Conditions: 150 mM KOAc, 10 mM MgCl2 and 150 mM bicine (pH 8.5), 24 C. The record gives the reactivity of an RNA of 177 nucleotides to 2A3 and DMS. For DMS the reverse transcriptase was MarathonRT. The DMS profile rests on 2,379 reads.

RNA sequence: GGGAACGACUCGAGUAGAGUCGAAAAGUGCUGGGCACUCAGCAGAUGCACCAUACAGUUCUGUUCAGUGGGAGUGUAGGGAGUUUAGGUGAGGGUUCAUCUGGGUUGGAUACAGUCUGAUCCAGAGCAGUUUCGGAUAUUUCGAUAUCCGAAACUGAAAAGAAACAACAACAACAAC
Reactivity to 2A3 in 0.01 (KOAc 150mM, MgCl2 10mM, bicine 150mM(pH8.5), 24C), signal-to-noise 1, nucleotides 027 to 126: g040u070g040c020u050g050g030g010c010a020c040u080c040a040g000c030a010g040a100u040g000c020a020c060c020a050u120a160c060a090g100u020u030c050u130g070u030u060c020a060g050u160g070g110g000a140g060u160g060u050a030g020g000g000a150g020u080u130u050a070g030g000u090g060a090g040g020g020u020u190c020a110u000c030u020g010g040g030u000u010g000g000a010u110a180c080a070g090u010c010u000g040a000u040c000c000a000g000a000g000
Reactivity to DMS in 0.01 (KOAc 150mM, MgCl2 10mM, bicine 150mM(pH8.5), 24C), signal-to-noise 2, nucleotides 027 to 126: g010u010g020c030u000g010g000g020c060a050c100u010c040a100g030c030a090g000a110u000g000c080a120c060c050a100u000a120c160a060g010u000u010c090u000g020u020u000c120a040g000u010g000g000g020a070g030u000g020u000a050g000g000g010a090g010u010u010u010a080g020g000u000g000a100g010g010g000u000u000c060a100u000c010u000g020g000g010u000u010g010g000a030u000a100c240a140g000u000c010u000g000a010u010c010c000a000g000a030g000